[RMDB]
RNA sequence: GGGAACGACUCGAGUAGAGUCGAAAAGGUCCUUCGGGACCACAAAUCCGUAGGGAGACGUAACAUCCCAUUGGGAGCCUCAUACGUUCGAAAGAGCGUAAUGAGGCGAAGAACAAUGGGUGGUCUCCCUAAACGGUCUGGCAGCCUUCGGGCUGAAGGCAGAAAAUCUAUUCGUAGAUUUUCUGCCAAAAGAAACAACAACAACAAC
Reactivity to DMS in 0.01 (KOAc 150mM, MgCl2 10mM, bicine 150mM(pH8.5), 24C), signal-to-noise 1, nucleotides 027 to 156: g020g010u000c000c000u000u020c270g070g060g000a010c000c010a020c070a050a090a070u000c000c000g100u000a040g040g000g000a040g010a010c030g040u010a090a050c110a300u000c000c000c000a030u010u000g010g010g000a300g000c030c000u010c010a050u010a010c020g000u000u000c010g020a130a090a270g000a020g000c000g000u000a030a070u010g030a020g000g000c020g030a010a060g010a150a160c000a010a010u010g010g000g010u000g050g000u000c000u020c010c000c000u000a000a010a050c050g000g010u010c070u020g020g000c000a050g030c010c010u000u010c300g040g060g000c000u000g000a070a070
Reactivity to 2A3 in 0.01 (KOAc 150mM, MgCl2 10mM, bicine 150mM(pH8.5), 24C), signal-to-noise 2, nucleotides 027 to 156: g000g000u010c000c000u020u050c230g070g000g010a010c000c060a030c020a010a080a020u070c000c000g000u030a020g000g010g000a020g000a000c010g000u020a030a050c100a300u190c000c000c000a000u000u000g000g000g000a010g000c000c000u000c000a000u000a020c000g020u000u020c020g020a070a130a050g010a010g000c000g000u010a010a300u020g000a000g000g000c000g000a000a000g010a010a010c000a000a020u000g000g000g040u000g000g000u000c000u010c020c010c000u010a000a000a000c000g000g040u050c070u120g140g000c010a030g000c020c000u030u100c210g110g020g020c010u010g010a060a010